Chemical mapping of a 177-nucleotide RNA with DMS and 2A3.
RNA sequence: GGGAACGACUCGAGUAGAGUCGAAAAUACAGGACGUGAAGGUUGCGGGUUCGACUCCCGCCCCGGCGACGGGUAGCUCAACUGGAUAGAGCAACGCGCAUGUUCCACCAACGAUCGUCGCCGCACUGCCAUUGAGUUAGUUCGCUAACUCAAUGGCAAAAGAAACAACAACAACAAC
Reactivity to DMS in 0.01 (KOAc 150mM, MgCl2 10mM, bicine 150mM(pH8.5), 24C), signal-to-noise 1, nucleotides 027 to 126: u090a050c030a050g000g010a070c050g030u000g010a040a010g030g040u050u090g000c000g010g000g000u000u000c030g000a300c090u000c030c000c010g000c000c010c000c010g000g000c000g020a030c000g000g010g030u000a080g000c040u020c000a090a030c220u010g020g000a240u070a130g040a020g030c020a300a170c080g000c080g030c040a060u010g000u000u010c000c000a060c010c070a170a070c090g000a060u000c000g000u000c000g020c000c000g000c140a050c070u000
Reactivity to 2A3 in 0.01 (KOAc 150mM, MgCl2 10mM, bicine 150mM(pH8.5), 24C), signal-to-noise 3, nucleotides 027 to 126: u270a000c090a040g000g120a040c020g000u020g050a070a000g050g020u080u110g000c000g000g020g010u000u040c020g000a010c000u000c020c010c000g010c010c010c000c000g000g010c000g000a010c000g000g000g010u040a020g000c000u010c040a040a030c100u140g070g060a160u080a110g010a010g030c020a040a010c030g010c020g010c040a020u080g030u030u000c050c020a040c000c000a070a050c030g050a080u120c020g010u000c000g000c040c000g020c050a090c090u040
In probing experiments dimethyl sulfate is read out at A N1 and C N3, which are open when not base-paired. Source: RMDB libraries RFM100 and RFMREP, as collected in RNAgym.